The record gives the reactivity of an RNA of 177 nucleotides to DMS and 2A3.
For 2A3 the reverse transcriptase was SuperScript II with manganese.
DMS adducts were read by reverse transcription with MarathonRT.
It was measured as part of the RMDB library OK2TST.

RNA sequence: GGGAACGACUCGAGUAGAGUCGAAAAGCGCAACUCGGCAAGACCGAGCACACCUGCGGUCCCCAGAAUGAUGGUGAUAACCGAAUCCAGACGGAAUCCCAGCAGUGUGGUUCCGCUCAGCGCAACAUCUAGUCGAUCUAUUCGUAGAUCGACUAGAAAAAGAAACAACAACAACAAC
Reactivity to DMS in 0.01 (KOAc 150mM, MgCl2 10mM, bicine 150mM(pH8.5), 24C), signal-to-noise 4, nucleotides 027 to 126: g000c010g040c000a160a110c000u000c000g000g010c010a190a160g010a300c000c000g010a010g010c080a060c170a160c080c020u000g000c010g010g010u000c060c030c020c030a090g020a070a090u000g000a070u000g010g020u010g000a030u000a080a070c050c020g010a110a070u010c120c140a140g010a110c030g010g000a190a060u000c010c010c000a050g010c090a050g010u000g030u000g010g000u000u010c000c000g020c030u000c100a110g000c020g000c000a120a080c200a090
Reactivity to 2A3 in 0.01 (KOAc 150mM, MgCl2 10mM, bicine 150mM(pH8.5), 24C), signal-to-noise 3, nucleotides 027 to 126: g020c000g000c000a000a120c000u000c020g020g000c170a240a050g060a300c010c000g000a010g030c040a020c000a020c000c010u040g000c010g000g030u010c000c010c030c010a050g090a300a160u090g020a070u030g030g040u190g100a050u030a080a170c000c000g020a030a060u040c080c040a060g060a110c000g010g000a000a000u030c010c010c000a010g000c020a030g060u030g040u130g090g000u070u000c010c010g000c020u050c080a040g010c000g020c000a020a080c020a110